Structure probing data (2A3 and DMS) for a 177-nucleotide construct.
2A3 adducts were read by reverse transcription with SuperScript II with manganese.
For 2A3, 1,718 sequencing reads were counted.

RNA sequence: GGGAACGACUCGAGUAGAGUCGAAAACUGAGACCACUGACGCCUGACCACUUAAGAUGAAGAUCACCAUUCUUCGGGUUGUAUUUUUGGACUCACUUAAAUUCAACUCUUAUUAUCAGAUGCACUCGUCUGUAAUAACCUUCGGGUUAUUACAGACAAAAGAAACAACAACAACAAC
Reactivity to 2A3 in 0.01 (KOAc 150mM, MgCl2 10mM, bicine 150mM(pH8.5), 24C), signal-to-noise 2, nucleotides 027 to 126: c010u030g020a010g100a080c010c010a020c110u040g080a040c050g030c010c020u020g030a090c000c030a060c100u110u070a080a030g030a200u160g030a050a020g020a030u030c050a020c120c000a040u070u000c010u060u050c020g000g000g000u050u020g010u010a030u030u010u010u020u040g100g070a240c000u010c090a130c020u090u060a040a030a020u040u000c000a000a010c020u000c030u110u060a100u070u060a080u110c030a030g080a200u120g010c030a040c130u100c070
Reactivity to DMS in 0.01 (KOAc 150mM, MgCl2 10mM, bicine 150mM(pH8.5), 24C), signal-to-noise 2, nucleotides 027 to 126: c060u010g000a130g010a100c040c040a050c060u010g000a090c120g020c040c020u010g010a110c100c050a080c110u000u000a080a070g010a070u000g020a050a030g000a050u000c130a120c140c100a090u000u000c040u000u020c050g000g000g000u010u000g010u000a020u000u000u000u010u010g000g010a130c150u010c090a050c040u000u010a000a020a040u000u000c030a030a020c020u000c000u010u000a080u000u020a100u000c050a060g010a100u010g010c120a090c100u010c130
It was measured as part of the RMDB library OK2TRN.